[RMDB]
RNA sequence: GGGAACGACUCGAGUAGAGUCGAAAAUUUGAGAGAAGUUCAUGAAUUUGGUGGCCAUAGUUUGAUCUGUAGUGCAAAUUAGCAUAGCUAUCAAAGCAAUCAAUCUGUGUUUUGAUGUGACUGUUUUUCUCUACCAGAAGUGGAGAACAGGACAGAAGACAUUACAGUGUUUCGACACUGUAAUGUCAAAAGAAACAACAACAACAAC
Reactivity to DMS in 0.01 (KOAc 150mM, MgCl2 10mM, bicine 150mM(pH8.5), 24C), signal-to-noise 2, nucleotides 027 to 156: u000u000u030g010a140g000a080g010a040a090g010u000u010c050a100u020g020a080a110u000u000u000g020g020u000g010g020c000c020a050u010a060g020u000u040u000g020a060u010c050u000g000u000a140g020u000g010c030a080a060a090u000u000a090g010c040a070u000a080g020c020u010a060u000c040a040a030a070g010c040a080a100u010c050a060a100u010c090u050g020u010g020u000u000u000u000g010a110u000g030u010g020a120c020u010g020u010u010u010u000u000c000u000c010u010a050c030c020a230g030a120a280g030u000g020g010a060g000a030a040c180a060g020g020a100c010a090g010a130a270
Reactivity to 2A3 in 0.01 (KOAc 150mM, MgCl2 10mM, bicine 150mM(pH8.5), 24C), signal-to-noise 5, nucleotides 027 to 156: u070u040u050g030a050g010a010g020a100a070g060u110u150c070a050u130g110a140a130u090u070u090g050g000u020g020g000c000c000a020u020a040g050u020u040u100g060a100u030c060u050g060u120a040g020u060g100c030a030a110a220u090u040a080g030c040a060u050a070g010c020u040a020u080c020a000a060a020g020c020a040a060u080c010a040a040u050c110u140g050u000g000u040u000u040u060g050a070u050g030u020g060a060c000u000g040u030u010u000u090u000c000u000c000u010a030c010c040a050g040a290a010g130u020g000g000a020g000a010a000c030a020g010g020a000c010a000g080a100a030
About this RNA:
An RNA of 207 nucleotides, treated with DMS and 2A3 and read out base by base. For DMS the reverse transcriptase was MarathonRT. The data come from the RNA Mapping Database (RMDB), library OK3TST. The reactions ran in a buffer of 150 mM KOAc, 10 mM MgCl2 and 150 mM bicine (pH 8.5), at 24 C.